[RMDB]
This 177-nucleotide RNA was probed chemically with 2A3 and DMS.
RNA sequence: GGGAACGACUCGAGUAGAGUCGAAAACACGGACCAAGGAGUCUAACAUGUGUGCAAGUGUUAGGGUGUGGAAACCCCAGCGCGAAAUGAAAGUGAAGGGCAGCGUAAGUUGUCUGAGGUAGGAAAUAAUCUUAGGGGUGUUCGCACCCCUAAGAUUAAAAGAAACAACAACAACAAC
Reactivity to 2A3 in 0.01 (KOAc 150mM, MgCl2 10mM, bicine 150mM(pH8.5), 24C), signal-to-noise 2, nucleotides 027 to 126: c000a000c060g020g010a000c000c050a260a120g110g000a100g100u020c000u030a070a000c050a120u090g140u040g100u100g040c000a000a020g050u020g050u020u060a030g030g000g000u090g000u050g000g090a060a060a000c000c000c000c000a010g050c050g000c050g020a050a130a000u230g040a240a100a000g030u060g110a030a000g000g000g000c030a000g000c010g040u030a120a180g010u040u000g000u000c000u020g000a000g020g000u040a010g000g090a020a020a020u090
Reactivity to DMS in 0.01 (KOAc 150mM, MgCl2 10mM, bicine 150mM(pH8.5), 24C), signal-to-noise 1, nucleotides 027 to 126: c070a040c140g000g010a010c050c060a180a090g020g000a090g000u030c000u000a060a110c190a060u000g040u000g000u000g000c060a090a180g000u010g000u000u010a100g030g000g000u000g000u000g000g010a080a090a070c010c000c000c030a070g000c080g020c030g000a020a010a110u020g010a060a050a030g030u000g000a090a120g020g020g000c050a000g020c070g000u150a010a090g010u000u000g000u000c080u000g000a000g030g030u050a030g000g000a020a050a010u030

High 2A3 reactivity points to a flexible backbone, as in loops and unpaired stretches. For 2A3 the reverse transcriptase was SuperScript II with manganese. The RNA was probed in 150 mM KOAc, 10 mM MgCl2 and 150 mM bicine (pH 8.5) at 24 C. For 2A3, 726 sequencing reads were counted. The DMS profile rests on 1,947 reads.